[RMDB]
RNA sequence: GGGAACGACUCGAGUAGAGUCGAAAACAGGCCCUGCCCCCGGGGCCCAUGCAGACCCUCAUCUUUUUCGACAUGGAGGCCACUGGCUUGCCCUUCUCCCAGCCCAAGGUCACGGAGCUGUGCCUGCUAAGGAUGUUGUAUUCGUACAACAUCCUUAAAAAGAAACAACAACAACAAC
Reactivity to DMS in 0.01 (KOAc 150mM, MgCl2 10mM, bicine 150mM(pH8.5), 24C), signal-to-noise 5, nucleotides 027 to 126: c110a160g010g010c010c010c020u000g000c050c010c010c020c040g000g000g010g020c010c000c050a020u000g000c110a080g010a120c050c010c010u000c080a070u000c020u000u000u010u010u000c060g010a060c070a080u000g000g010a070g010g000c030c040a080c090u010g000g000c030u010u000g000c040c010c030u000u000c050u000c010c010c020a110g010c040c020c030a080a090g010g010u000c050a070c100g000g010a100g020c040u000g020u000g010c050c010u000g010c160
Reactivity to 2A3 in 0.01 (KOAc 150mM, MgCl2 10mM, bicine 150mM(pH8.5), 24C), signal-to-noise 2, nucleotides 027 to 126: c000a010g020g000c000c000c000u020g030c020c010c010c010c000g000g000g010g000c010c050c000a060u160g030c030a040g050a240c010c000c010u050c030a130u090c020u030u150u070u080u110c030g050a070c020a070u120g060g000a030g060g040c000c020a060c080u080g070g040c040u030u090g070c020c010c000u030u010c010u000c020c000c020a030g040c010c000c030a040a050g060g010u070c010a010c030g030g040a040g010c030u060g020u050g040c020c000u030g060c030
Structure probing data (DMS and 2A3) for a 177-nucleotide construct. For DMS, 10,829 sequencing reads were counted. For 2A3 the reverse transcriptase was SuperScript II with manganese. Conditions: 150 mM KOAc, 10 mM MgCl2 and 150 mM bicine (pH 8.5), 24 C. For DMS the reverse transcriptase was MarathonRT.